[RMDB]
Annotation
An RNA of 207 nucleotides, treated with DMS and 2A3 and read out base by base. High DMS reactivity at an A or C suggests that its Watson-Crick edge is free. DMS adducts were read by reverse transcription with MarathonRT. Source: RMDB library M2RFPK, as collected in RNAgym. The 2A3 profile rests on 1,184 reads.
RNA sequence: GGGAACGACUCGAGUAGAGUCGAAAAUAAGCAAAAGACAACCACCUUUCCCGCUGACAAUAGCGUUAUCCCUCUGCACUUCGGUAAUAUGAGGGCACAGUAAAUCCCGCAAGGAUGAGAAUGUGUUUAAACAGUUACAGCUUCGGCUGUAACUGAAGAUUAAUGGGUGGUUCGCCACCCAUUAAUCAAAAGAAACAACAACAACAAC
Reactivity to DMS in 0.01 (KOAc 150mM, MgCl2 10mM, bicine 150mM(pH8.5), 24C), signal-to-noise 1, nucleotides 027 to 156: u010a090a060g010c110a050a020a180a050g020a110c050a120a110c070c020a160c080c050u000u000u000c010c000c040g030c110u020g040a110c090a050a150u000a130g010c040g040u000u000a150u000c010c000c020u000c030u000g000c080a060c020u000u020c200g020g080u030a060a080u020a100u000g000a070g030g010g000c020a010c080a090g000u000a020a110a040u000c000c000c010g090c140a060a180g030g020a070u000g000a140g020a060a080u000g050u020g000u010u000u000a050a120a180c020a080g020u000u000a020c020a000g000c000u020u000c290g070g070c000u010g030u000a000a000c000u000g010a030a080
Reactivity to 2A3 in 0.01 (KOAc 150mM, MgCl2 10mM, bicine 150mM(pH8.5), 24C), signal-to-noise 2, nucleotides 027 to 156: u100a020a020g030c060a030a020a060a070g130a100c050a040a070c060c040a100c030c040u010u050u050c000c000c020g000c050u000g050a110c090a140a140u110a170g040c010g060u080u080a140u090c000c010c000u000c020u030g030c050a040c040u040u090c130g100g030u040a060a040u110a060u300g010a000g000g000g000c000a000c000a020g010u010a010a030a040u000c000c000c000g140c100a040a000g010g010a010u030g010a010g020a010a010u030g000u010g030u020u100u210a070a120a010c000a000g000u000u000a000c000a000g040c000u000u120c130g140g000c000u000g000u000a010a000c000u010g000a000a000
The RNA was probed in 150 mM KOAc, 10 mM MgCl2 and 150 mM bicine (pH 8.5) at 24 C.